[RMDB]
About this RNA
Conditions: 150 mM KOAc, 10 mM MgCl2 and 150 mM bicine (pH 8.5), 24 C. The record gives the reactivity of an RNA of 177 nucleotides to 2A3 and DMS.
RNA sequence: GGGAACGACUCGAGUAGAGUCGAAAAAUCUAGAAAAAGCCAACAAGAUAAAAUCGGAGAAAACACACAUUCACAUAUUCUCAUUCACUGGAGAGGAGAUGGCCACCAAGGCGGACUACACCCUUGACCUAAUUGAGUGUUUCGACACUCAAUUAGGAAAAGAAACAACAACAACAAC
Reactivity to 2A3 in 0.01 (KOAc 150mM, MgCl2 10mM, bicine 150mM(pH8.5), 24C), signal-to-noise 1, nucleotides 027 to 126: a020u050c020u050a040g000a000a180a050a020a000g000c020c010a030a030c020a090a000g060a110u190a160a110a030a090u080c060g090g000a020g000a050a030a040a000c050a010c010a000c000a060u080u070c000a010c020a050u060a070u110u010c020u020c020a050u210u030c050a080c090u100g100g020a070g000a000g030g000a050g000a050u030g060g080c000c010a010c040c000a040a040g040g020c020g000g030a010c010u090a020c010a040c030c000c050u000u020g060a030
Reactivity to DMS in 0.01 (KOAc 150mM, MgCl2 10mM, bicine 150mM(pH8.5), 24C), signal-to-noise 2, nucleotides 027 to 126: a080u030c050u030a090g000a070a100a050a190a160g000c030c030a010a050c110a080a070g010a080u000a070a030a040a190u010c050g030g000a150g000a030a040a040a050c080a030c080a100c110a070u010u010c060a020c080a060u000a090u000u000c030u010c010a080u000u000c110a050c130u000g000g000a080g000a030g000g000a030g000a020u020g000g020c020c050a070c050c050a030a120g020g030c090g030g020a120c050u000a110c110a060c040c060c030u010u000g010a210